Annotation: The record gives the reactivity of an RNA of 207 nucleotides to 2A3.

RNA sequence: GGGAACGACUCGAGUAGAGUCGAAAAGAAGGAAAGAAAGAACUCUGUAAAGUGAGGGAUUGCCUGGACCAGGUCGGCGGGCCUGCUCCAGUUUCCUUCGCUCUGCUCAACGGGCAGACCGCCACAAAAAACGCGUGGCUGUUCGCAGCCACGCGAACUAACUGCACUAGUUCGCUAGUGCAGUUAGAAAAGAAACAACAACAACAAC
Reactivity to 2A3 in 0.01 (KOAc 150mM, MgCl2 10mM, bicine 150mM(pH8.5), 24C), signal-to-noise 1, nucleotides 027 to 156: g020a010a000g010g020a080a010a050g070a050a180a020g080a060a030c030u050c050u060g060u230a150a090a110g090u070g030a020g000g030g030a060u080u160g020c020c000u010g000g000a000c000c000a000g000g030u020c050g000g060c000g000g030g010c000c000u000g000c000u000c000c000a000g030u010u020u000c000c000u000u000c010g020c000u040c000u010g000c010u020c030a080a130c120g000g000g010c020a020g030a120c010c010g020c010c000a080c060a040a120a020a010a020a010c000g000c000g010u000g000g000c020u010g010u060u120c200g000c080a000g000c000c020a000c010g020c010g000a000a000
Source information
Reactivities are given for positions 27 through 156. The data come from the RNA Mapping Database (RMDB), library M2RFPK.